[RMDB]
RNA sequence: GGGAACGACUCGAGUAGAGUCGAAAAUGGGGCCCGGGGUUUGAGUCAUACGGCUCCAAGUUUAAUGACUCGAAAUAAACGCACACCGCACGAACUCAUUCAUCUUUCGAGUGGAGAACGUUGAGUACCAGUCGUGAUGAUUCGUCAUCACGACUGGAAAAGAAACAACAACAACAAC
Reactivity to 2A3 in 0.01 (KOAc 150mM, MgCl2 10mM, bicine 150mM(pH8.5), 24C), signal-to-noise 1, nucleotides 027 to 126: u050g050g060g000g030c000c000c000g000g020g000g000u130u100u140g010a010g010u000c040a060u070a130c060g010g010c000u000c000c040a000a050g000u000u070u090a080a110u040g000a010c010u000c010g000a060a080a050u170a000a070a000c030g000c000a000c000a000c040c010g000c040a000c030g040a060a000c000u000c050a010u120u020c030a150u050c000u000u160u050c050g010a070g070u130g020g020a100g000a160a000c010g000u040u010g020a020g080u000a100
Record summary: An RNA of 177 nucleotides, treated with 2A3 and read out base by base. The 2A3 profile rests on 661 reads. Reactivities are given for positions 27 through 126. Conditions: 150 mM KOAc, 10 mM MgCl2 and 150 mM bicine (pH 8.5), 24 C.